Structure probing data (2A3 and DMS) for a 177-nucleotide construct.
RNA sequence: GGGAACGACUCGAGUAGAGUCGAAAAGAAUUAUGAUUGCGUGGCACGCUCGGUCAAGCUCGUGUGGUAUCACACACAUGGCGCCAGGUCACACCAAAAGCUCCUCCGUCACCUCCACAUCAGUGAGCGAGUACCUACAUUUCGAUGUAGGUACUCGAAAAGAAACAACAACAACAAC
Reactivity to 2A3 in 0.01 (KOAc 150mM, MgCl2 10mM, bicine 150mM(pH8.5), 24C), signal-to-noise 7, nucleotides 027 to 126: g060a000a110u240u120a090u210g110a110u040u160g030c060g010u050g050g000c040a020c100g050c050u030c060g050g000u050c070a060a030g010c010u020c120g020u010g000u020g010g070u170a120u300c020a040c000a000c000a000c010a070u080g030g000c040g000c020c000a000g020g030u040c010a020c010a040c070c030a060a060a020a020g040c010u020c000c000u020c000c010g050u040c010a020c020c000u000c010c010a040c000a070u080c020a030g080u050g080a020g060
Reactivity to DMS in 0.01 (KOAc 150mM, MgCl2 10mM, bicine 150mM(pH8.5), 24C), signal-to-noise 3, nucleotides 027 to 126: g000a110a050u010u010a060u040g000a110u010u010g000c060g050u010g010g000c070a090c070g010c030u000c040g020g030u000c090a040a100g010c050u010c070g020u010g020u010g020g000u020a120u030c080a080c070a040c030a030c000a060u030g010g020c010g000c040c050a080g000g000u000c020a070c080a060c070c070a060a070a090a110g000c030u000c010c010u000c010c050g010u010c040a060c020c000u000c050c030a040c070a040u020c080a070g030u010g010a120g010